[RMDB]
RNA sequence: GGGAACGACUCGAGUAGAGUCGAAAAAACGACACUCGCGCGCUUUAGGGACCGGAGAGCUGGCACACGACCGCAGGGCGACCUGCGCGAUGCCCACACCACACACUCCGCCCCGCGCCUGGUGAACCAGGGGUUCCAUUUUCGAAUGGAACCCCUGAAAAGAAACAACAACAACAAC
Reactivity to DMS in 0.01 (KOAc 150mM, MgCl2 10mM, bicine 150mM(pH8.5), 24C), signal-to-noise 3, nucleotides 027 to 126: a080a130c090g030a180c000a000c010u000c260g030c100g020c020g060c030u020u000u020a140g020g010g010a030c300c000g020g010a000g030a080g010c260u070g000g040c030a020c170a090c150g000a200c300c000g000c000a000g020g000g000c170g000a170c020c000u000g000c000g010c020g000a170u000g000c090c020c040a080c060a150c040c030a150c060a040c090a090c000u000c000c000g000c010c000c010c020g010c000g030c040c010u000g020g000u000g000a130a150c130
Reactivity to 2A3 in 0.01 (KOAc 150mM, MgCl2 10mM, bicine 150mM(pH8.5), 24C), signal-to-noise 4, nucleotides 027 to 126: a000a000c070g060a040c020a000c010u020c010g040c020g010c000g010c080u150u170u190a090g000g010g030a060c150c090g010g000a010g000a030g020c120u070g010g000c000a020c010a020c080g050a050c060c040g000c010a010g010g000g000c020g060a130c000c000u010g000c000g000c000g030a030u030g000c000c010c000a020c020a020c020c020a040c000a010c000a010c040u000c000c000g030c010c000c000c000g000c000g000c000c020u050g000g000u010g020a040a040c040
The record gives the reactivity of an RNA of 177 nucleotides to DMS and 2A3. The data come from the RNA Mapping Database (RMDB), library RFM100. 2A3 adducts were read by reverse transcription with SuperScript II with manganese. The reactions ran in a buffer of 150 mM KOAc, 10 mM MgCl2 and 150 mM bicine (pH 8.5), at 24 C. For DMS, 2,623 sequencing reads were counted. The 2A3 profile rests on 3,267 reads.